[RMDB]
RNA sequence: GGGAACGACUCGAGUAGAGUCGAAAAAUCGGGUUGACGACCAGAUGCGCGCCUUUCGCGACACACAAGGGCGCGAGCGUGUUUGGCACACCCGCGAUGCCAUCUUAUUGUGUAUCGGCCAUAAUAGGUAGAGACCAUAUUUCGAUAUGGUCUCUACAAAAGAAACAACAACAACAAC
Reactivity to 2A3 in 0.01 (KOAc 150mM, MgCl2 10mM, bicine 150mM(pH8.5), 24C), signal-to-noise 8, nucleotides 027 to 126: a000u080c020g010g000g040u120u140g140a300c080g120a210c010c010a010g010a020u030g010c010g000c000g050c020c020u080u110u060c040g030c030g070a050c030a010c010a010c020a230a130g170g100g000c020g000c000g000a000g000c020g010u050g010u020u020u020g010g010c010a010c000a000c020c000c000g000c010g000a010u010g020c000c010a030u040c130u240u240a280u180u160g030u020g010u080a020u020c000g040g000c030c010a100u150a230a090u120a220g140
Reactivity to DMS in 0.01 (KOAc 150mM, MgCl2 10mM, bicine 150mM(pH8.5), 24C), signal-to-noise 7, nucleotides 027 to 126: a090u010c010g010g010g010u000u010g040a080c130g010a200c000c010a030g020a030u000g020c000g000c000g010c120c110u000u020u000c100g030c030g000a090c170a090c160a100c220a080a060g000g000g010c000g000c030g010a030g000c050g030u000g010u000u000u000g000g010c040a100c080a030c000c000c000g010c030g000a030u000g010c000c010a040u000c300u010u010a090u010u000g010u010g020u000a030u000c020g010g010c030c030a100u010a070a110u010a090g010
Background: Structure probing data (2A3 and DMS) for a 177-nucleotide construct. The DMS profile rests on 9,735 reads. The reactions ran in a buffer of 150 mM KOAc, 10 mM MgCl2 and 150 mM bicine (pH 8.5), at 24 C. It was measured as part of the RMDB library OK2TST. High 2A3 reactivity points to a flexible backbone, as in loops and unpaired stretches. For 2A3 the reverse transcriptase was SuperScript II with manganese. For 2A3, 11,088 sequencing reads were counted.